About this RNA: Structure probing data (DMS and 2A3) for a 177-nucleotide construct. For 2A3, 1,427 sequencing reads were counted.

RNA sequence: GGGAACGACUCGAGUAGAGUCGAAAAGAAGAGCCGGGCUAACAAACGUGGGAGGCACCCAACCCUUCGCAAGAGCCGAGUGGGAAGGCUAAGCGAAACCAAGACAAAAUGGUUAUAAAUAAUGCAAAUAGAUAUGAGGUUUCGACCUCAUAUCUAUAAAAGAAACAACAACAACAAC
Reactivity to DMS in 0.01 (KOAc 150mM, MgCl2 10mM, bicine 150mM(pH8.5), 24C), signal-to-noise 2, nucleotides 027 to 126: g030a130a110g000a120g010c010c040g000g000g010c020u000a150a120c130a120a120a070c090g010u000g000g000g000a080g030g000c090a140c020c030c040a040a210c060c040c030u000u000c020g000c050a020a130g030a080g020c010c000g000a100g050u010g010g030g000a110a200g010g010c020u000a070a210g000c020g000a030a040a030c020c020a010a080g000a120c130a030a060a090a070u010g000g010u000u010a110u000a030a050a100u010a080a080u010g010c050a050a120
Reactivity to 2A3 in 0.01 (KOAc 150mM, MgCl2 10mM, bicine 150mM(pH8.5), 24C), signal-to-noise 2, nucleotides 027 to 126: g080a040a000g020a020g020c050c000g000g000g040c030u060a140a040c030a120a100a030c030g000u080g000g000g000a040g020g000c000a050c020c000c010a050a040c000c000c010u010u010c040g010c030a100a060g020a000g290c020c020g000a030g060u210g000g110g020a030a060g030g030c010u030a050a020g020c010g040a000a000a000c020c000a050a020g130a120c070a060a110a030a080u060g020g010u080u060a140u060a110a100a030u140a060a040u090g010c010a110a170
Annotation
The DMS profile rests on 1,373 reads. DMS adducts were read by reverse transcription with MarathonRT. As a SHAPE reagent, 2A3 marks flexible, mostly unpaired nucleotides at the ribose 2'-OH. Conditions: 150 mM KOAc, 10 mM MgCl2 and 150 mM bicine (pH 8.5), 24 C.